Annotation: Structure probing data (DMS and 2A3) for a 207-nucleotide construct.
RNA sequence: GGGAACGACUCGAGUAGAGUCGAAAACCGUAGGAACAGCAUCGAUCGUGGUGGAGUAUUGCAAACACACCUUCGAAAGAGGGUGUGGACGUAUAAUACGUUGAAACCACGGGAGCUGUUCCUAAACGGAAAACUUAGAACCUUCGGGUUCUAAGAACAGAAUGGAUGAGUUCGCUCAUCCAUUCUGAAAAGAAACAACAACAACAAC
Reactivity to DMS in 0.01 (KOAc 150mM, MgCl2 10mM, bicine 150mM(pH8.5), 24C), signal-to-noise 1, nucleotides 027 to 156: c010c000g020u000a030g050g000a020a030c010a010g070c020a140u010c110g000a100u000c020g010u050g020g010u000g010g000a220g050u000a000u010u010g010c100a100a130a210c000a030c000a000c010c000u000u030c020g020a130a120a260g020a030g000g030g050u000g020u000g000g000a120c150g070u010a130u000a030a010u010a040c010g000u030u030g030a280a220a020c000c000a010c010g000g020g000a090g000c000u000g000u000u000c000c000u000a000a020a030c080g010g000a140a050a040a100c010u000u020a020g000a000a000c000c020u010u000c300g060g020g100u000u000c000u000a000a010g020a110a250
Reactivity to 2A3 in 0.01 (KOAc 150mM, MgCl2 10mM, bicine 150mM(pH8.5), 24C), signal-to-noise 3, nucleotides 027 to 156: c000c000g010u010a000g000g010a010a000c000a000g010c030a300u100c060g240a090u100c000g020u000g000g040u000g000g030a030g000u000a010u000u030g010c050a060a300a000c010a000c000a010c000c010u020u000c010g060a130a050a050g010a000g000g000g000u000g000u010g000g000a000c020g040u060a110u070a180a030u000a010c040g090u160u070g040a030a010a000c000c000a000c000g000g000g000a000g010c000u020g000u020u000c000c000u000a000a000a000c000g020g030a060a160a000a000c000u000u000a000g000a010a020c000c010u070u120c300g080g000g010u000u000c000u000a000a000g000a000a010
The RNA was probed in 150 mM KOAc, 10 mM MgCl2 and 150 mM bicine (pH 8.5) at 24 C. The DMS profile rests on 2,080 reads.